Structure probing data (2A3 and DMS) for a 177-nucleotide construct. The RNA was probed in 150 mM KOAc, 10 mM MgCl2 and 150 mM bicine (pH 8.5) at 24 C. Source: RMDB libraries RFM100 and RFMREP, as collected in RNAgym. For DMS the reverse transcriptase was MarathonRT.

RNA sequence: GGGAACGACUCGAGUAGAGUCGAAAAUCCUAGUGUACAGUGGUAUAAGUAAGCUGUGCAUUCGCUAUGUUUAGGUUUAGAAUGUAGUUUAGUGCUAGCUGAUUAGAGUGUGUUAAAGACUUGUAGACGCAUGUCAGCUAUUCGUAGCUGACAUGCGAAAAGAAACAACAACAACAAC
Reactivity to 2A3 in 0.01 (KOAc 150mM, MgCl2 10mM, bicine 150mM(pH8.5), 24C), signal-to-noise 1, nucleotides 027 to 126: u000c000c000u010a000g030u030g020u080a000c070a030g040u030g100g100u140a030u060a180a000g220u020a010a040g000c000u020g030u050g000c000a000u010u030c010g010c030u110a080u070g160u010u060u020a000g120g240u080u120u080a030g020a150a150u210g010u010a010g000u110u090u060a150g030u090g080c020u010a070g130c030u000g040a160u000u030a060g010a010g020u010g010u040g000u090u170a110a050a000g070a010c000u040u070g090u000a010g060a160
Reactivity to DMS in 0.01 (KOAc 150mM, MgCl2 10mM, bicine 150mM(pH8.5), 24C), signal-to-noise 2, nucleotides 027 to 126: u000c000c000u000a050g040u040g000u000a000c060a050g030u010g010g080u020a210u010a060a130g000u010a130a160g020c000u000g000u050g010c000a010u000u000c300g040c030u000a010u010g060u000u000u010a090g020g000u020u020u000a150g020a020a010u000g010u010a000g010u000u000u020a030g010u000g020c030u010a010g000c000u000g010a110u000u000a090g010a050g020u000g010u000g020u000u000a120a090a090g000a100c070u020u000g000u030a060g010a190